This 177-nucleotide RNA was probed chemically with 2A3 and DMS. DMS adducts were read by reverse transcription with MarathonRT. Reactivities are rounded to 0.1 and cut off at 0 and 3. Conditions: 150 mM KOAc, 10 mM MgCl2 and 150 mM bicine (pH 8.5), 24 C. It was measured as part of the RMDB library OK1LIB.
[RMDB]
RNA sequence: GGGAACGACUCGAGUAGAGUCGAAAAGAAGGAGAUGAAAGCGACUUUAGAAUCGGCUAACUGAGCAGGCAGAUCCAGACGGCAAGUAUCGUCGCCAGAGAUACAGUCGCAACUAGCCGAAGGAGAAGCAUUAAUAGGUAUUCGUACCUAUUAAUGCAAAAGAAACAACAACAACAAC
Reactivity to 2A3 in 0.01 (KOAc 150mM, MgCl2 10mM, bicine 150mM(pH8.5), 24C), signal-to-noise 9, nucleotides 027 to 126: g110a030a030g070g050a070g010a040u110g080a090a060a020g030c020g030a050c020u120u140u110a090g040a110a080u040c020g010g000c010u020a040a050c050u060g030a020g040c030a060g050g000c010a010g010a060u010c020c010a030g020a070c020g010g000c030a090a090g060u080a100u150c060g030u020c020g040c050c020a020g030a000g000a060u050a080c030a020g020u020c010g000c020a010a020c020u020a000g000c010c010g020a030a010g090g050a100g020a080a010
Reactivity to DMS in 0.01 (KOAc 150mM, MgCl2 10mM, bicine 150mM(pH8.5), 24C), signal-to-noise 9, nucleotides 027 to 126: g010a080a080g010g000a090g010a050u010g000a070a080a080g010c040g010a120c040u010u010u010a060g010a160a130u010c030g020g000c010u010a050a120c110u010g000a100g010c050a070g010g000c020a060g010a070u010c060c060a120g000a150c040g000g000c030a080a110g020u020a060u020c070g010u010c050g020c060c050a080g010a100g000a020u010a030c040a100g020u000c030g000c060a060a080c110u000a040g010c000c010g000a050a060g000g000a110g000a110a110